An RNA of 177 nucleotides, treated with DMS and 2A3 and read out base by base. Values cover nucleotides 27 to 126. For 2A3 the reverse transcriptase was SuperScript II with manganese. For 2A3, 522 sequencing reads were counted. The DMS profile rests on 1,161 reads. Values are in units of 0.01, from 0 to 300, in steps of 10.
[RMDB]
RNA sequence: GGGAACGACUCGAGUAGAGUCGAAAAAAUGCCACAGUGGGGAUGGAGGCCAGGCCGUGGCCAGAGCAGAUACGUAGGCCCAUGAAAUUGAUGAACUGAGAGUUGCUUCCAGUCCUGAGCGCACCAUAUGGUACCUAUCCUUCGGGAUAGGUACCAUAAAAGAAACAACAACAACAAC
Reactivity to DMS in 0.01 (KOAc 150mM, MgCl2 10mM, bicine 150mM(pH8.5), 24C), signal-to-noise 1, nucleotides 027 to 126: a180a080u000g000c000c010a170c140a020g030u040g000g000g000g000a100u000g000g040a120g040g040c000c010a200g050g060c030c060g000u010g060g000c000c040a010g000a220g000c090a040g000a110u010a120c140g030u000a090g000g000c090c000c040a020u080g000a010a020a090u000u010g000a030u030g010a060a090c140u000g000a030g000a000g000u000u020g030c020u000u010c000c000a040g000u030c000c000u000g050a050g060c070g150c080a010c010c130a100u000
Reactivity to 2A3 in 0.01 (KOAc 150mM, MgCl2 10mM, bicine 150mM(pH8.5), 24C), signal-to-noise 2, nucleotides 027 to 126: a000a010u110g020c010c000a000c010a040g060u090g160g000g060g000a060u020g100g060a150g000g000c000c020a040g000g180c010c000g080u050g030g060c020c030a000g000a000g010c060a030g050a170u210a050c010g080u030a000g000g000c000c000c000a000u020g070a060a060a090u300u300g050a040u130g000a210a030c040u030g060a000g000a000g170u130u170g030c000u010u000c000c000a000g050u040c000c010u080g030a040g000c060g000c000a070c050c000a010u000